[RMDB]
RNA sequence: GGGAACGACUCGAGUAGAGUCGAAAAAAGAUGAAUCUGAGGGAGCUCAAUUCAGUAAAUAGCAGUAGUCAUUAAUGGACAAUGUAUACAAAGAUAAUUUCGUGAUUACUGUCCUUAUGCAUAAACGUCCUCAGUGUUCCACUGCGUUUAUCCAGAACCAUAGGAGCUGAUUCGUCAGCUCCUAUGGAAAAGAAACAACAACAACAAC
Reactivity to DMS in 0.01 (KOAc 150mM, MgCl2 10mM, bicine 150mM(pH8.5), 24C), signal-to-noise 2, nucleotides 027 to 156: a070a100g030a110u010g010a030a030u000c080u010g010a030g000g010g020a150g010c040u010c060a040a070u000u010c040a030g010u000a060a060a050u010a130g000c010a020g040u000a040g020u000c000a030u000u000a030a040u010g030g010a090c070a110a090u000g000u000a100u010a180c160a080a080a110g010a110u010a050a080u000u000u010c100g040u000g010a070u000u000a070c030u020g000u010c030c050u000u000a040u000g030c070a050u000a020a020a090c080g010u000c030c000u000c040a070g020u000g010u000u000c010c040a080c050u000g020c040g020u010u000u000a080u000c030c040a120g030a120a160
Reactivity to 2A3 in 0.01 (KOAc 150mM, MgCl2 10mM, bicine 150mM(pH8.5), 24C), signal-to-noise 6, nucleotides 027 to 156: a000a000g090a060u060g010a040a030u060c080u050g000a010g010g060g020a090g080c030u010c050a030a060u090u010c020a000g010u060a000a080a110u140a090g000c000a000g000u030a000g010u020c000a020u030u120a080a080u090g020g010a020c020a080a040u100g080u070a070u040a100c100a060a130a020g070a070u090a090a130u120u100u130c090g030u090g030a020u020u030a010c010u030g050u110c000c020u100u120a050u080g010c010a010u060a080a090a050c060g050u020c000c020u030c030a010g010u020g040u140u010c040c010a020c040u040g020c020g030u020u020u030a040u030c040c040a030g100a080a090
This 207-nucleotide RNA was probed chemically with DMS and 2A3.
For DMS, 4,741 sequencing reads were counted.
For DMS the reverse transcriptase was MarathonRT.
The reactions ran in a buffer of 150 mM KOAc, 10 mM MgCl2 and 150 mM bicine (pH 8.5), at 24 C.